[RMDB]
RNA sequence: GGGAACGACUCGAGUAGAGUCGAAAAAGCUGAAAGAGGAAGAGAGCAAAGAACAGUAGAGUUUGCUCAAUGAGCAGAAAGGGUGAUGGAGACAGGGACAGUGGUGACCGAGUACUCUGCAGGUGCAAGAAUUUUACUAGUUAUGUACUGAAAGUGCAUCGAUCUGUGAGUUCGCUCACAGAUCGAUAAAAGAAACAACAACAACAAC
Reactivity to 2A3 in 0.01 (KOAc 150mM, MgCl2 10mM, bicine 150mM(pH8.5), 24C), signal-to-noise 1, nucleotides 027 to 156: a000g000c020u000g060a030a010a050g020a070g030g000a060a030g080a020g010a000g020c020a040a120a000g050a030a050c030a020g110u130a030g030a000g040u000u070u000g000c000u000c050a020a110u300g000a000g000c040a000g050a050a140a000g060g030g020u000g010a010u020g040g000a000g000a000c030a020g040g010g010a010c000a010g130u090g100g020u000g000a040c010c010g030a010g040u060a040c030u040c020u010g010c040a000g000g010u020g050c010a070a000g090a020a100u020u120u100u120a060c080u000a050g040u040u040a080u120g020u030a040c010u020g040a100a040a040g040u070g010c000

The data come from the RNA Mapping Database (RMDB), library OK3TST. Structure probing data (2A3) for a 207-nucleotide construct. The 2A3 profile rests on 486 reads. The RNA was probed in 150 mM KOAc, 10 mM MgCl2 and 150 mM bicine (pH 8.5) at 24 C.